[RMDB]
RNA sequence: GGGAACGACUCGAGUAGAGUCGAAAACUGCAGGGGAUGGCAACACAUGCGGCCGAAACGAGACGCAAGAUGGACUUCAGACUACUGCAGAUAGCAGCCAUCUCAGCUUCUACAUGGGGGCCAAGACAUGCUAUAGCUAGUUCGCUAGCUAUAGCAUAAAAGAAACAACAACAACAAC
Reactivity to DMS in 0.01 (KOAc 150mM, MgCl2 10mM, bicine 150mM(pH8.5), 24C), signal-to-noise 5, nucleotides 027 to 126: c020u010g000c010a040g000g000g000g010a040u000g020g010c060a090a080c080a050c110a140u000g020c060g000g000c020c000g000a110a070a070c180g000a060g030a040c040g000c020a180a060g000a100u010g010g000a090c120u010u020c090a070g020a090c060u000a090c020u020g000c040a080g010a140u010a080g000c040a060g000c030c010a020u000c010u000c090a080g000c020u000u010c000u000a070c070a080u050g000g000g000g030g020c010c110a040a080g020a120c190
Reactivity to 2A3 in 0.01 (KOAc 150mM, MgCl2 10mM, bicine 150mM(pH8.5), 24C), signal-to-noise 7, nucleotides 027 to 126: c040u050g020c030a040g000g030g020g010a030u060g020g040c030a070a050c030a020c010a080u100g060c010g040g000c020c000g030a080a080a030c080g010a050g020a050c010g010c020a040a020g020a080u050g030g010a050c030u080u060c150a060g020a090c100u200a040c020u170g050c040a020g040a130u080a040g020c030a010g010c010c010a030u030c010u000c010a020g000c000u050u040c010u080a200c040a150u130g040g000g000g000g030c000c010a030a020g060a040c060